Conditions: 150 mM KOAc, 10 mM MgCl2 and 150 mM bicine (pH 8.5), 24 C. Structure probing data (DMS) for a 177-nucleotide construct. The data come from the RNA Mapping Database (RMDB), library TTRINS. DMS adducts were read by reverse transcription with MarathonRT.
RNA sequence: GGGAACGACUCGAGUAGAGUCGAAAAGAUAUGGAAUUGUGAGACAUGACAGGCAACCGAUGAAAUGACAUCGGAAACGAUGUACAUUUCAUCGGUUGCCUGUCAACAGCUCAUUGAUUCCUAAGUCCAACUAUAGGAAGUUCGCUUCCUAUAGUUGAAAAGAAACAACAACAACAAC
Reactivity to DMS in 0.01 (KOAc 150mM, MgCl2 10mM, bicine 150mM(pH8.5), 24C), signal-to-noise 2, nucleotides 027 to 126: g010a100u010a300u010g000g000a030a010u000u000g020u000g000a020g010a040c070a300u010g020a030c000a030g030g000c020a010a010c000c000g020a040u000g020a020a000a000u000g010a110c010a000u000c000g010g000a040a050a190c040g060a010u010g020u000a080c010a030u000u000u000c000a010u000c020g000g020u000u000g020c000c000u000g020u000c010a000a040c280a130g000c000u000c000a000u000u020g040a010u010u000c000c000u000a070a190g010u000c050